[RMDB]
RNA sequence: GGGAACGACUCGAGUAGAGUCGAAAAGAGCAUUGGUGAUAGGAGGUGUGGGCUUGGUUAGUAGAGGUAGAAUUAUGAUUGUUCUUGUGAGUUUCAGUAAGAGGUGGGAGUGAUUGGAAUUUGGCUCGUAAGUAUGGUACUUCGGUACCAUACUUACAAAAGAAACAACAACAACAAC
Reactivity to 2A3 in 0.01 (KOAc 150mM, MgCl2 10mM, bicine 150mM(pH8.5), 24C), signal-to-noise 3, nucleotides 027 to 126: g050a010g000c050a060u050u100g050g000u060g040a060u070a080g030g030a040g000g040u070g030u090g050g000g010c000u080u050g060g000u070u070a040g010u060a020g020a040g020g020u060a030g050a120a060u150u110a080u150g160a120u060u090g040u050u000c040u050u060g050u030g060a070g030u010u060u050c030a030g020u050a080a000g020a020g070g040u050g020g040g000a040g020u040g020a110u000u090g020g030a020a070u040u030u080g070g000c050u020c050
Reactivity to DMS in 0.01 (KOAc 150mM, MgCl2 10mM, bicine 150mM(pH8.5), 24C), signal-to-noise 3, nucleotides 027 to 126: g010a090g010c070a100u000u000g010g030u000g010a090u010a080g010g010a100g010g010u010g010u010g000g010g010c070u010u010g000g010u000u000a080g020u000a090g020a070g000g020u010a040g010a080a070u010u000a130u000g010a110u000u000g010u000u000c060u000u000g010u000g010a090g010u020u000u010c020a050g020u020a080a100g010a060g010g010u010g000g010g010a110g010u010g010a050u000u000g000g000a040a090u000u010u000g010g010c070u010c140
Conditions: 150 mM KOAc, 10 mM MgCl2 and 150 mM bicine (pH 8.5), 24 C. An RNA of 177 nucleotides, treated with 2A3 and DMS and read out base by base. The 2A3 profile rests on 2,923 reads. The DMS profile rests on 4,287 reads. DMS (dimethyl sulfate) methylates the pairing face of unpaired adenines and cytosines.